Structure probing data (DMS and 2A3) for a 207-nucleotide construct.
Source: RMDB library OK3TST, as collected in RNAgym.

RNA sequence: GGGAACGACUCGAGUAGAGUCGAAAAGAUGAUGCAAUUUUUUUCAUGUACGCGGGGAAUGGGCCAUUUGAAAUGUACUCGGAGAACAUGACAGAUUGCUUCGAGUAAUCCUUGUUCUUGUUGAAAUUCGACUUGGCUAGAAGCUCGCUCUCCGGGACACAGGACACAUAUUCGUAUGUGUCCUGUGAAAAGAAACAACAACAACAAC
Reactivity to DMS in 0.01 (KOAc 150mM, MgCl2 10mM, bicine 150mM(pH8.5), 24C), signal-to-noise 1, nucleotides 027 to 156: g020a090u020g030a070u000g030c040a130a040u020u020u000u000u010u000u000c030a080u000g000u010a100c030g030c010g000g010g000g040a080a030u020g020g060g040c000c020a090u010u020u040g010a100a070a080u000g030u000a050c010u000c000g020g020a060g000a040a060c040a050u000g020a190c200a130g000a080u000u000g020c030u030u000c100g030a080g050u090a010a030u010c020c030u000u000g020u010u000c040u010u020g020u010u000g000a100a070a160u000u000c050g000a040c070u000u000g010g000c040u020a060g010a080a040g000c030u000c030g040c040u000c000u000c010c010g000g030g000a280
Reactivity to 2A3 in 0.01 (KOAc 150mM, MgCl2 10mM, bicine 150mM(pH8.5), 24C), signal-to-noise 3, nucleotides 027 to 156: g040a060u170g010a010u070g020c060a040a070u020u000u000u010u050u070u070c050a060u060g050u090a090c070g020c020g160g000g000g000a030a090u050g040g030g000c030c000a060u070u080u100g110a110a120a040u130g000u010a050c000u000c010g010g000a010g000a050a050c030a050u070g060a060c040a080g080a100u030u170g050c000u000u040c050g020a020g000u000a010a050u010c020c000u020u030g010u060u060c010u000u030g050u020u050g050a170a180a160u130u080c000g000a020c020u030u040g020g000c000u010a030g010a130a050g050c020u010c010g000c020u000c000u000c000c000g030g030g000a000

About this RNA: High DMS reactivity at an A or C suggests that its Watson-Crick edge is free. The RNA was probed in 150 mM KOAc, 10 mM MgCl2 and 150 mM bicine (pH 8.5) at 24 C.